[RMDB]
RNA sequence: GGGAACGACUCGAGUAGAGUCGAAAACGCUAGAAGGUGGGGUGGGGAGAGCAGCUGGACUGGGAUGUAAGCCAUAGCAGGACUCCACGAGUUGUCACUAUCAUUUAUCGAGCACCUACUGGGUGUCCCCGUAUACUGAAUUCGUUCAGUAUACGGGAAAAGAAACAACAACAACAAC
Reactivity to 2A3 in 0.01 (KOAc 150mM, MgCl2 10mM, bicine 150mM(pH8.5), 24C), signal-to-noise 2, nucleotides 027 to 126: c020g030c020u040a040g050a130a080g130g100u210g010g020g030g050u100g030g010g000g000a260g060a000g070c050a000g020c050u070g040g000a040c020u020g000g000g030a020u060g050u110a070a000g030c020c010a060u030a010g030c020a020g000g070a000c000u000c000c020a030c030g000a000g010u000u070g030u040c050a010c100u080a090u130c060a140u040u130u150a180u180c100g010a020g010c000a000c010c010u160a230c120u190g030g000g010u000g020u030c000
Reactivity to DMS in 0.01 (KOAc 150mM, MgCl2 10mM, bicine 150mM(pH8.5), 24C), signal-to-noise 3, nucleotides 027 to 126: c110g010c090u010a060g010a080a130g030g010u000g010g010g020g010u000g000g010g010g000a110g010a070g030c070a050g010c070u000g030g010a080c070u010g000g010g020a080u010g010u000a050a100g020c070c060a090u000a050g000c060a080g010g000a060c010u000c010c020a190c070g010a050g010u000u010g000u000c150a110c070u000a060u010c090a050u010u000u000a090u020c120g000a110g020c040a030c030c020u010a110c240u000g010g010g030u000g000u010c100